[RMDB]
RNA sequence: GGGAACGACUCGAGUAGAGUCGAAAAGAUAUUAACGCGCGUGCUGUGUCUAACGCGAAUUACCCAGUUAUUUUCGUCUUUACUCGAGUCGUUAUAGCGUGAUAUGACACAGUUAUCCGCGAACGAACGAACAAUUGGGAUUCGUCCCAAUUGUUCGAAAAGAAACAACAACAACAAC
Reactivity to DMS in 0.01 (KOAc 150mM, MgCl2 10mM, bicine 150mM(pH8.5), 24C), signal-to-noise 1, nucleotides 027 to 126: g000a140u010a090u000u010a020a080c160g030c020g000c020g010u010g040c030u010g010u000g000u000c020u010a060a010c000g020c010g000a100a030u010u000a090c120c030c050a110g020u010u010a040u000u000u000u010c000g010u000c010u000u000u000a000c000u000c000g020a040g000u000c000g010u000u000a010u010a170g010c000g020u010g000a030u000a020u010g000a010c030a030c050a030g000u010u000a040u000c000c000g000c000g020a080a130c120g000a070a120